[RMDB]
RNA sequence: GGGAACGACUCGAGUAGAGUCGAAAAGAUAUGGAAUUAAACGCGUGGGAGUCGUGCGGAGAGUAUUAGUCGGAAACGACUGGGUACCUCGGAUAGCGACGACGAUCACGCGUUUAAUUCCUAAGUCCUAUUUAAUGACCUUCGGGUCAUUAAAUAGAAAAGAAACAACAACAACAAC
Reactivity to DMS in 0.01 (KOAc 150mM, MgCl2 10mM, bicine 150mM(pH8.5), 24C), signal-to-noise 3, nucleotides 027 to 126: g000a090u010a300u010g000g010a040a010u000u000a020a010a030c000g020c000g040u000g020g010g000a300g010u000c000g040u000g010c030g020g010a070g010a140g010u000a000u000u000a030g010u000c000g000g000a140a080a270c000g000a010c000u000g010g010g020u000a000c020c000u000c030g020g010a170u010a160g010c040g010a030c010g010a010c010g020a300u020c000a010c000g010c000g000u000u000u000a000a000u000u010c000c000u000a020a110g000u000c040